[RMDB]
RNA sequence: GGGAACGACUCGAGUAGAGUCGAAAACAUAGACCAGACACACCCCAGAGCAUAUCUGGGCGGUUAGGCUUUGAAGUGAGUCUUGUGAGUCCUCUCUGCUGAUAAUAGCUGUCUACUUGGACCUUAAUAAGCCAGUUCAUAAGAUGUACUGCAGGCACAGUACCCCAUCAUUCGUGAUGGGGUACUGAAAAGAAACAACAACAACAAC
Reactivity to 2A3 in 0.01 (KOAc 150mM, MgCl2 10mM, bicine 150mM(pH8.5), 24C), signal-to-noise 2, nucleotides 027 to 156: c000a010u170a040g060a080c000c000a010g040a020c050a010c000a080c070c020c000c000a000g020a000g030c140a130u100a090u300c000u000g020g000g000c010g000g000u040u110a030g000g000c040u130u140u150g080a090a000g030u040g070a020g000u040c000u010u020g010u010g060a030g040u010c020c030u050c020u020c040u050g000c030u000g060a080u050a300a050u090a080g030c060u040g000u000c050u080a140c050u110u130g030g000a010c000c010u140u100a180a080u100a110a080g050c040c020a010g010u000u040c010a010u030a060a140g030a090u080g000u080a050c000u030g030c070a000g140g000c290a000
Reactivity to DMS in 0.01 (KOAc 150mM, MgCl2 10mM, bicine 150mM(pH8.5), 24C), signal-to-noise 1, nucleotides 027 to 156: c050a130u020a070g030a090c050c040a120g040a120c090a220c120a130c030c000c010c000a020g040a030g030c220a140u010a090u010c000u000g010g030g000c040g010g010u000u000a090g030g050c020u050u010u030g020a070a100g000u000g000a120g030u010c000u000u030g000u030g000a080g000u010c040c040u010c080u000c030u000g000c050u000g030a150u000a080a110u000a050g030c010u010g030u000c030u000a100c080u000u000g010g000a090c030c060u010u000a060a110u010a070a110g000c060c030a110g000u020u000c070a030u000a090a130g010a200u000g000u000a160c030u000g030c000a030g000g070c030a300

Source: RMDB library OK3TST, as collected in RNAgym.
The record gives the reactivity of an RNA of 207 nucleotides to 2A3 and DMS.
Reactivities are given for positions 27 through 156.
For 2A3, 900 sequencing reads were counted.
2A3 adducts were read by reverse transcription with SuperScript II with manganese.
The reactions ran in a buffer of 150 mM KOAc, 10 mM MgCl2 and 150 mM bicine (pH 8.5), at 24 C.